[RMDB]
RNA sequence: GGGAACGACUCGAGUAGAGUCGAAAAGCGUACUACAACGCUGUACAGGACAUGAGCGCUAACGCUCUUCCCAAAUAGGAAGAGCGGACCCGCUCAACAGCCUGUAUGGCGUUGUAUCGCAAACAACCUUUGAACGGUUCGCCGUUCAAAGGUUGAACCACUUAUUCUGCUUCGGCAGAAUAAGUGGAAAAGAAACAACAACAACAAC
Reactivity to DMS in 0.01 (KOAc 150mM, MgCl2 10mM, bicine 150mM(pH8.5), 24C), signal-to-noise 1, nucleotides 027 to 156: g030c030g000u000a060c110u000a020c010a000a030c010g010c000u000g060u020a010c000a030g070g030a090c000a300u010g060a000g020c020g070c020u010a100a300c030g000c000u000c000u000u000c000c000c010a030a160a180u010a090g000g010a040a020g010a040g010c010g010g000a050c300c160c020g010c010u000c040a010a040c060a170g010c040c000u010g030u010a000u000g010g010c000g000u010u000g020u010a030u010c020g040c000a110a070a140c000a000a000c000c020u000u000u000g000a010a010c000g040g000u000u010c300g030c000c040g000u010u010c000a010a000a000g000g010u000u010g000a070a110
Reactivity to 2A3 in 0.01 (KOAc 150mM, MgCl2 10mM, bicine 150mM(pH8.5), 24C), signal-to-noise 3, nucleotides 027 to 156: g020c010g030u110a060c030u000a000c010a000a000c000g010c000u000g010u000a000c000a000g000g020a040c060a260u040g000a010g000c000g010c020u050a070a000c020g000c020u010c040u010u020c030c000c010a180a290a030u300a060g000g000a010a000g000a010g010c000g000g010a030c000c000c000g020c000u000c000a000a000c000a000g030c000c000u000g010u010a000u000g010g000c000g010u000u020g000u030a000u040c030g000c030a000a000a040c010a000a000c000c000u010u000u000g000a010a000c000g020g070u050u080c250g030c110c000g000u000u000c000a000a000a010g000g000u000u000g000a000a000
The record gives the reactivity of an RNA of 207 nucleotides to DMS and 2A3. 2A3 is a SHAPE reagent: it acylates the 2'-hydroxyl of flexible nucleotides of all four kinds. For DMS, 1,936 sequencing reads were counted. Source: RMDB library RNAMAK, as collected in RNAgym. For 2A3, 3,647 sequencing reads were counted. The RNA was probed in 150 mM KOAc, 10 mM MgCl2 and 150 mM bicine (pH 8.5) at 24 C.